[RMDB]
RNA sequence: GGGAACGACUCGAGUAGAGUCGAAAAUGAACCAGAACAAAAACCACAAAAUGACAGUAAACAAAUGAAAAGGUUAAGAAUUUACGCUCCAAAGACUUACCGCCCUUCCUGUACUAUUAAUCAUCGUGUUCUUGGACGACUGCCACUGCUCAGGGUGUAUAGCUUAACGCUUCGGCGUUAAGCUAUAAAAAGAAACAACAACAACAAC
Reactivity to 2A3 in 0.01 (KOAc 150mM, MgCl2 10mM, bicine 150mM(pH8.5), 24C), signal-to-noise 1, nucleotides 027 to 156: u070g010a050a070c020c020a040g090a010a140c180a070a090a000a030a000c060c150a090c070a040a180a020a090u080g070a070c000a070g000u090a050a000a000c070a060a180a040u090g150a070a000a030a000g030g000u070u010a050a070g020a080a050u110u110u220a090c050g020c000u000c070c010a070a130a000g020a070c020u020u050a020c060c000g020c060c000c000u030u020c050c000u030g130u080a140c020u060a130u090u130a030a090u020c020a000u020c070g020u030g060u080u000c000u010u050g020g000a000c020g060a000c070u050g070c010c020a090c030u030g050c060u000c000a000g090g000g000u000g010

Structure probing data (2A3) for a 207-nucleotide construct. Reactivities are given for positions 27 through 156. For 2A3 the reverse transcriptase was SuperScript II with manganese. Conditions: 150 mM KOAc, 10 mM MgCl2 and 150 mM bicine (pH 8.5), 24 C. The data come from the RNA Mapping Database (RMDB), library OK3TST.